[RMDB]
RNA sequence: GGGAACGACUCGAGUAGAGUCGAAAACGCGAUGGAUACGUCCAUCGCGAAUCCGUCCAAGCCGCGGACGUUAAACUGUGGCACGGUUGUGCCUAGGUGCAACCCUGCUCCGAAUGGCGGCACCCCUGCCCAAGCUACCGUCUACGGACGGUAGCAAGAUUAGGUCGCUAUUCGUAGCGACCUAAUCAAAAGAAACAACAACAACAAC
Reactivity to 2A3 in 0.01 (KOAc 150mM, MgCl2 10mM, bicine 150mM(pH8.5), 24C), signal-to-noise 2, nucleotides 027 to 156: c010g010c000g000a000u010g000g010a010u010a020c160g080u000c000c000a000u000c000g030c000g010a000a000u020c020c020g000u000c010c000a100a020g000c010c000g000c000g000g000a010c000g000u000u030a030a030a040c070u110g010u230g030g000c010a010c000g010g020u000u040g010u030g000c000c020u140a250g030g040u010g000c010a010a020c010c010c010u010g000c000u010c030c020g070a190a210u040g080g000c000g000g000c010a090c000c000c000c040u090g040c020c010c040a040a010g010c000u000a000c000c000g000u040c000u010a020c220g070g000a000c000g000g000u000a000g000c000a000a000

The record gives the reactivity of an RNA of 207 nucleotides to 2A3. Reactivities are given for positions 27 through 156. The RNA was probed in 150 mM KOAc, 10 mM MgCl2 and 150 mM bicine (pH 8.5) at 24 C.